An RNA of 177 nucleotides, treated with 2A3 and read out base by base.
RNA sequence: GGGAACGACUCGAGUAGAGUCGAAAAAAUUGGAAUUUUAAAACUUCAGUUAGAAGGGUUCCAAGGUUUGCUCAACCUGGAGAAUCGGGUAAUAGUUUGAGCGUGCGUCUUGAACUUUUUUUGGUGGCCAUGGUGACUCGUUCGCGAGUCACCAUGGAAAAGAAACAACAACAACAAC
Reactivity to 2A3 in 0.01 (KOAc 150mM, MgCl2 10mM, bicine 150mM(pH8.5), 24C), signal-to-noise 1, nucleotides 027 to 126: a040a060u000u070g030g050a010a000u130u090u040u150a140a120a000a000c000u010u010c000a120g100u200u100a030g000a060a020g010g000g000u010u000c010c010a020a020g100g050u000u120u250g080c010u000c010a020a010c000c020u010g000g000a230g010a180a110u150c000g000g000g040u040a040a090u010a140g090u000u000u000g010a000g000c030g020u180g130c080g090u130c010u020u030g040a020a040c000u060u000u000u000u000u150u230g050g000u110g040g030

Reactivities are given for positions 27 through 126. Source: RMDB library OK1LIB, as collected in RNAgym.